[RMDB]
RNA sequence: GGGAACGACUCGAGUAGAGUCGAAAAUGUCCGGCGCCCAUCCGAAACGUACGGGUGGCUUGCGCUGUACACCCAUCCGAAACGUACGUGUGCUCUGCCGCAGCAUGCGAAAGGAUGGUGUAUGCUUAUGUGGCACGGUGCUGUCGCUCGCGUACGGCGUUCGCGAGUUGUUCGCAACUCGCGAACGAAAAGAAACAACAACAACAAC
Reactivity to 2A3 in 0.01 (KOAc 150mM, MgCl2 10mM, bicine 150mM(pH8.5), 24C), signal-to-noise 4, nucleotides 027 to 156: u110g000u060c050c000g030g000c000g010c020c000c010a010u000c010c000g080a180a190a160c200g080u300a060c020g040g010g000u010g000g000c020u070u170g000c000g000c000u000g000u010a000c010a020c020c000c010a030u060c040c040g130a170a080a070c030g030u040a010c000g020u040g030u040g010c000u010c020u090g020c010c010g000c000a020g000c010a000u010g050c010g030a170a040a000g060g010a070u090g030g030u040g000u010a020u020g000c000u170u130a070u200g000u060g000g000c030a010c150g120g030u160g070c120u130g100u200c060g000c010u010c000g020c000g000u000a000c000g010g010
Reactivity to DMS in 0.01 (KOAc 150mM, MgCl2 10mM, bicine 150mM(pH8.5), 24C), signal-to-noise 1, nucleotides 027 to 156: u000g000u020c030c030g000g020c000g060c020c020c000a060u010c030c010g010a110a130a200c170g030u030a160c010g020g020g030u000g000g020c300u010u010g030c080g050c010u010g060u000a050c020a090c060c010c040a070u000c020c000g020a110a090a060c050g000u010a080c020g000u000g010u000g000c050u000c000u020g030c080c070g050c070a050g010c020a000u000g000c000g020a070a110a080g020g010a050u010g010g000u000g010u000a010u010g010c060u000u010a050u010g010u000g020g050c000a070c050g020g010u000g050c050u010g000u000c000g000c010u010c060g030c010g010u000a010c040g020g000
This 207-nucleotide RNA was probed chemically with 2A3 and DMS.
Reactivities are given for positions 27 through 156.
It was measured as part of the RMDB library OK3TST.
For DMS, 2,855 sequencing reads were counted.